An RNA of 207 nucleotides, treated with 2A3 and DMS and read out base by base. It was measured as part of the RMDB library ARCHII. Conditions: 150 mM KOAc, 10 mM MgCl2 and 150 mM bicine (pH 8.5), 24 C. The 2A3 profile rests on 2,866 reads.

[RMDB]
RNA sequence: GGGAACGACUCGAGUAGAGUCGAAAAGUGCCGGGUAAGUCCAUGUUGACGGGACGUCCGCACUAAGCUGACCGUCAAUAUGGGUGCAAUGGGGGAGCCCGAUGCAUUCAGGUUGGCUAAAGAGAGAUGAACCGAGCGAGGGGUGAAAACCAGCAGCCAUAAGUGUAUACUUCGGUAUACACUUAUGAAAAGAAACAACAACAACAAC
Reactivity to 2A3 in 0.01 (KOAc 150mM, MgCl2 10mM, bicine 150mM(pH8.5), 24C), signal-to-noise 3, nucleotides 027 to 156: g020u010g020c040c040g020g010g020u100a090a060g030u030c000c010a040u050g050u070u080g070a040c050g010g020g030a060c060g070u040c040c050g020c010a040c130u070a090a030g000c000u020g050a020c020c000g010u040c000a020a050u030a050u100g010g000g010u050g000c030a050a190u100g000g000g000g010g020a020g060c040c010c000g000a070u100g000c030a050u000u060c020a020g040g000u030u040g010g000c000u010a020a100a000g030a010g000a000g010a010u060g040a040a060c050c020g010a020g020c050g030a100g010g020g000g020u070g020a020a040a000a040c010c000a010g030c010a010g030c040
Reactivity to DMS in 0.01 (KOAc 150mM, MgCl2 10mM, bicine 150mM(pH8.5), 24C), signal-to-noise 2, nucleotides 027 to 156: g020u000g000c000c020g000g000g010u000a050a150g020u000c020c000a010u000g010u000u000g000a090c010g020g000g000a180c110g000u000c120c090g030c060a050c050u000a070a140g020c030u000g000a110c020c030g020u000c010a040a030u000a030u000g000g020g040u000g000c100a130a160u020g020g010g020g050g020a220g010c010c000c030g000a090u010g000c010a140u010u000c050a030g000g040u000u010g020g000c020u000a050a050a070g000a140g000a110g020a080u010g000a090a080c020c020g000a080g030c030g000a140g000g010g000g000u000g000a050a040a070a070c010c010a060g010c040a110g010c080